RNA sequence: GGGAACGACUCGAGUAGAGUCGAAAAGAUAUGGAUACGCGAGAGGCUUGGACCCUGUGGUUCGGAAACGAACCCAGGCUAGCCUCUCAUCCUAAGUCAAAUCAUCGGUAGUUCGCUACCGAUGAAACCAUGUUCACUUGUUCGCAAGUGAACAUGGAAAAGAAACAACAACAACAAC
Reactivity to DMS in 0.01 (KOAc 150mM, MgCl2 10mM, bicine 150mM(pH8.5), 24C), signal-to-noise 3, nucleotides 027 to 126: g020a040u010a300u000g000g010a030u010a090c260g030c240g020a010g000a030g010g020c000u010u010g050g030a160c300c010c000u000g000u020g020g010u000u000c000g010g010a040a080a160c000g000a020a010c000c010c000a000g020g000c040u000a010g000c000c000u000c010u000c000a010u000c000c000u010a060a180g010u000c020a080a100a200u000c000a000u000c000g010g000u000a000g010u000u000c210g010c010u000a010c010c010g010a000u000g010a010a060a160
Reactivity to 2A3 in 0.01 (KOAc 150mM, MgCl2 10mM, bicine 150mM(pH8.5), 24C), signal-to-noise 4, nucleotides 027 to 126: g000a000u050a010u170g040g010a030u080a190c210g060c160g290a000g000a000g020g020c040u190u240g170g100a260c050c000c020u070g180u300g050g020u000u000c010g000g040a060a070a030c000g000a000a000c000c000c000a000g000g010c000u000a000g000c000c000u010c000u000c000a000u000c000c010u030a090a010g040u000c020a020a010a230u040c000a010u000c000g000g000u010a000g000u060u050c280g000c120u010a000c000c000g010a000u000g000a000a000a000